[RMDB]
RNA sequence: GGGAACGACUCGAGUAGAGUCGAAAAGUCACUCAAUUCGUUGAGUGACAUACUGGGCCCGGAGUCGCGCAUGAAAGGGUCAAGACGCCCUCGAUAAAAUAACUAGUUGCCAGUUCGCUGGCAACAAUAAUAAGGACAUGUUCGCAUGUCCUUAUUAAAAAGAAACAACAACAACAAC
Reactivity to 2A3 in 0.01 (KOAc 150mM, MgCl2 10mM, bicine 150mM(pH8.5), 24C), signal-to-noise 4, nucleotides 027 to 126: g010u010c000a000c010u010c000a010a040u090u080c160g050u090u000g000a000g000u000g000a000c000a000u030a010c010u040g000g040g010c000c040c000g010g000a040g030u030c020g020c010g020c240a030u090g070a090a030a040g020g000g000u020c020a020a020g070a040c060g060c010c020c000u020c040g110a110u120a180a150a030a030u120a070a030c090u060a100g000u010u000g010c000c000a000g010u030u050c170g050c120u000g010g000c000a000a000c000a000a000
Reactivity to DMS in 0.01 (KOAc 150mM, MgCl2 10mM, bicine 150mM(pH8.5), 24C), signal-to-noise 6, nucleotides 027 to 126: g010u000c000a010c000u000c000a010a030u000u010c210g030u000u000g010a020g010u000g000a010c000a020u000a020c060u000g010g010g000c010c000c020g000g010a120g010u000c020g020c120g030c110a080u000g010a090a190a090g000g010g010u000c050a060a060g010a160c170g000c000c020c010u010c070g000a150u010a060a060a080a060u010a070a090c150u000a120g010u000u000g000c000c000a000g010u000u010c200g020c000u000g010g000c000a000a000c000a060a060